The record gives the reactivity of an RNA of 207 nucleotides to 2A3. Values cover nucleotides 27 to 156. 2A3 is a SHAPE reagent: it acylates the 2'-hydroxyl of flexible nucleotides of all four kinds.

RNA sequence: GGGAACGACUCGAGUAGAGUCGAAAAGCAACCUAGGAUUUUAGGCUCCCCGUGCGUGUCUCGAACCAUGCCGGGCCAAACCCACGGGGGCUGGCGGUCCCCGUGCGGUCAAAAUCAAACCGCUGGAAAAACAGUUCUAGCUUCGGCUAGAACUGAACUAUCUUAUCGGCUUCGGCCGAUAAGAUAGAAAAGAAACAACAACAACAAC
Reactivity to 2A3 in 0.01 (KOAc 150mM, MgCl2 10mM, bicine 150mM(pH8.5), 24C), signal-to-noise 2, nucleotides 027 to 156: g040c000a020a030c000c000u100a120g120g030a300u110u160u010u110a060g050g000c050u090c030c000c000c020g070u230g070c060g050u070g020u020c100u030c240g040a040a020c030c000a000u000g000c000c010g010g010g030c010c010a080a060a010c000c000c000a000c000g000g000g010g010g000c010u000g000g000c000g000g000u010c030c000c000c000g000u010g010c070g000g000u020c070a170a090a030a090u120c030a170a070a090c010c000g010c040u050g020g020a160a050a030a000a000c000a000g010u010u010c000u000a000g000c000u040u060c220g060g000c000u000a010g000a000a000c000u000g000a000a000